Chemical mapping of a 177-nucleotide RNA with 2A3 and DMS. Reactivities are given for positions 27 through 126. For DMS the reverse transcriptase was MarathonRT. Reactivities are rounded to 0.1 and cut off at 0 and 3. For 2A3 the reverse transcriptase was SuperScript II with manganese. The RNA was probed in 150 mM KOAc, 10 mM MgCl2 and 150 mM bicine (pH 8.5) at 24 C.
[RMDB]
RNA sequence: GGGAACGACUCGAGUAGAGUCGAAAAGAACACGGUUGCGAACAGGUUUGCUUCGUUGAUGCAGCAACUAAGACCUAUUUGGAAGAGCUUGGUGGAAUGAACGUGUUUGUUUUGCACAAGGAUGGUCCAGCUCCUCAUAGUUCGCUAUGAGGAGCUGAAAAGAAACAACAACAACAAC
Reactivity to 2A3 in 0.01 (KOAc 150mM, MgCl2 10mM, bicine 150mM(pH8.5), 24C), signal-to-noise 2, nucleotides 027 to 126: g040a050a010c010a010c070g100g050u080u080g060c040g040a100a020c030a040g050g100u120u150u110g040c010u000u030c030g130u100u120g090a100u170g060c090a070g000c050a040a000c030u070a040a000g040a030c010c000u020a160u080u130u100g100g020a040a040g000a010g110c020u030u050g010g020u030g030g060a070a010u070g030a080a050c050g000u040g060u070u010u040g070u000u080u050u120g070c020a030c000a100a080g110g000a060u070g060g020u060c020
Reactivity to DMS in 0.01 (KOAc 150mM, MgCl2 10mM, bicine 150mM(pH8.5), 24C), signal-to-noise 2, nucleotides 027 to 126: g000a080a070c130a050c070g010g020u000u010g010c020g010a050a020c100a050g020g010u010u000u000g020c050u010u010c060g030u010u030g000a070u010g010c110a080g000c040a040a060c100u000a050a070g010a060c020c020u000a100u010u000u000g010g040a090a070g000a060g000c040u010u020g020g010u000g000g020a060a080u010g000a070a040c080g000u010g030u000u000u010g020u010u000u000u000g020c070a070c050a040a080g000g030a050u000g000g010u000c060